[RMDB]
RNA sequence: GGGAACGACUCGAGUAGAGUCGAAAAGAUAUGGAAGUAGGGUUGCAACAGCCCACUGACUCGGAAACGAGUUUGGGACAUGCAACGCUACUUCCUAAGUCAAACUCCUAGGGUUCGCCCUAGGAGAGAUGCAUAUCGGGUUCGCCCGAUAUGCAUCAAAAGAAACAACAACAACAAC
Reactivity to DMS in 0.01 (KOAc 150mM, MgCl2 10mM, bicine 150mM(pH8.5), 24C), signal-to-noise 2, nucleotides 027 to 126: g020a040u020a300u000g020g000a020a000g020u000a000g010g010g050u000u000g010c010a060a100c240a180g000c010c000c020a070c300u010g010a000c000u000c000g020g000a070a060a220c000g030a020g010u000u010u040g000g000g000a070c060a190u010g000c000a010a010c020g010c000u010a010c010u000u000c000c030u000a010a080g000u000c030a110a120a180c020u000c000c000u000a000g000g000g030u010u010c290g020c020c000c010u000a000g010g000a000g020a000
Reactivity to 2A3 in 0.01 (KOAc 150mM, MgCl2 10mM, bicine 150mM(pH8.5), 24C), signal-to-noise 2, nucleotides 027 to 126: g010a000u010a020u050g000g020a030a000g020u010a000g160g150g040u000u020g010c130a300a090c120a300g050c000c030c000a020c050u060g030a010c000u000c000g010g000a000a090a090c020g000a000g010u030u030u020g030g000g010a070c120a210u300g000c000a000a010c000g020c020u000a000c000u000u000c000c000u000a010a000g000u020c010a000a020a230c010u000c010c000u000a010g060g010g020u000u140c300g130c020c000c050u000a000g020g000a000g010a000
Annotation: Chemical mapping of a 177-nucleotide RNA with DMS and 2A3. For 2A3, 3,907 sequencing reads were counted. It was measured as part of the RMDB library TTRDES.